[RMDB]
RNA sequence: GGGAACGACUCGAGUAGAGUCGAAAAACGCGUUGGCUGCCUAAUUCAAGGAAUUAGCGUGCCUUCAUGCUAAGGGUUUGAUAUCUGCUAAAACCCGGUGCAUUCAUCAAUGCAGGUUAAGCCAAAGAAACGGCUCACGAAUUCGUUCGUGAGCCAACAAACUGAACAGAUUCGUCUGUUCAGUUUGAAAAGAAACAACAACAACAAC
Reactivity to DMS in 0.01 (KOAc 150mM, MgCl2 10mM, bicine 150mM(pH8.5), 24C), signal-to-noise 4, nucleotides 027 to 156: a050c060g030c050g020u000u000g020g010c030u000g010c120c000u020a050a060u000u000c030a180a160g040g010a070a090u000u000a020g000c040g030u000g010c010c020u000u000c020a100u000g030c020u000a280a180g010g000g010u000u000u010g000a180u000a070u000c040u000g020c050u000a130a040a030a040c000c000c020g020g050u010g020c020a080u000u010c050a090u000c110a140a160u000g000c020a020g000g010u000u010a060a120g010c020c020a020a090a140g010a050a120a160c140g020g020c000u000c000a010c000g000a040a060u000u010c300g010u000u010c000g020u000g010a010g020c010c000a000a040
Reactivity to 2A3 in 0.01 (KOAc 150mM, MgCl2 10mM, bicine 150mM(pH8.5), 24C), signal-to-noise 6, nucleotides 027 to 156: a000c070g050c030g010u020u010g010g010c040u070g040c030c030u020a020a020u030u030c140a240a120g170g030a100a020u010u000a020g010c060g080u040g000c020c000u020u020c030a040u060g000c010u010a020a060g010g000g010u000u000u000g020a020u020a030u070c040u010g020c020u030a030a030a000a030c000c000c010g000g000u040g000c010a080u050u220c030a090u080c090a160a140u160g010c010a000g000g040u060u170a110a040g020c050c040a110a070a030g070a050a150a020c130g000g000c000u000c000a000c000g010a030a030u080u090c190g040u120u000c000g000u040g040a000g000c000c000a000a000

Structure probing data (DMS and 2A3) for a 207-nucleotide construct. The reactions ran in a buffer of 150 mM KOAc, 10 mM MgCl2 and 150 mM bicine (pH 8.5), at 24 C. The DMS profile rests on 10,083 reads. For DMS the reverse transcriptase was MarathonRT. The 2A3 profile rests on 5,457 reads.